Structure probing data (DMS) for a 177-nucleotide construct. Conditions: 150 mM KOAc, 10 mM MgCl2 and 150 mM bicine (pH 8.5), 24 C. The DMS profile rests on 845 reads.
[RMDB]
RNA sequence: GGGAACGACUCGAGUAGAGUCGAAAAUUGAAUUGCAGUAGUCGAUCCAGUUGGCUAGGGUUGAAGGUUCAGUGACAUGUGUAAUCUGGACAUUUACAUAAAGUAGAAUUAAAGACCUCCUAACAAGCCGUACUGAACGAUUCGUCGUUCAGUACGGAAAAGAAACAACAACAACAAC
Reactivity to DMS in 0.01 (KOAc 150mM, MgCl2 10mM, bicine 150mM(pH8.5), 24C), signal-to-noise 1, nucleotides 027 to 126: u030u000g010a160a030u020u020g000c030a230g000u000a080g040u010c020g000a090u020c010c030a030g030u010u000g000g010c110u000a110g010g000g000u000u000g000a100a110g020g010u010u010c030a080g000u010g020a110c090a090u000g000u010g020u010a010a060u010c070u000g000g010a120c100a080u000u020u000a020c030a040u000a050a070a120g000u010a080g000a080a030u000u000a100a110a210g000a080c050c010u000c050c030u000a150a160c160a030a070g000